Structure probing data (2A3 and DMS) for a 177-nucleotide construct. The DMS profile rests on 19,286 reads.
RNA sequence: GGGAACGACUCGAGUAGAGUCGAAAACCAGUACACUGAGAUUUUCUCAGCUGGUGCUGGCAACAGAUACCUGUCUGGCUUCAAGGGGCAGAUCAAUGUCAAGCAUGAUGGCAGCGGAGCUGUCUUCCCUUCAGUUAAGUUUCGACUUAACUGAAGGAAAAGAAACAACAACAACAAC
Reactivity to 2A3 in 0.01 (KOAc 150mM, MgCl2 10mM, bicine 150mM(pH8.5), 24C), signal-to-noise 9, nucleotides 027 to 126: c000c000a010g020u030a010c030a000c020u030g010a000g030a110u130u110u300u150c000u000c010a020g010c070u090g130g020u010g000c010u000g010g000c010a060a020c010a050g080a050u120a170c020c000u030g050u060c010u020g120g080c030u120u080c100a100a080g060g000g010g000c010a010g010a080u090c060a060a110u070g020u040c030a050a030g060c040a110u150g040a040u080g090g020c010a010g020c060g150g060a050g010c010u010g010u020c000u040u040c010
Reactivity to DMS in 0.01 (KOAc 150mM, MgCl2 10mM, bicine 150mM(pH8.5), 24C), signal-to-noise 9, nucleotides 027 to 126: c000c000a020g010u000a030c030a160c010u010g000a030g010a220u010u010u010u000c000u000c000a010g020c250u010g020g030u000g010c000u000g000g000c150a090a090c090a060g010a100u000a080c070c020u000g000u010c030u000g000g010c040u000u000c080a080a120g010g000g010g010c030a030g000a060u010c130a080a080u000g010u000c030a060a110g020c080a100u000g010a080u000g010g000c010a020g010c090g010g000a080g010c040u010g000u000c050u000u000c100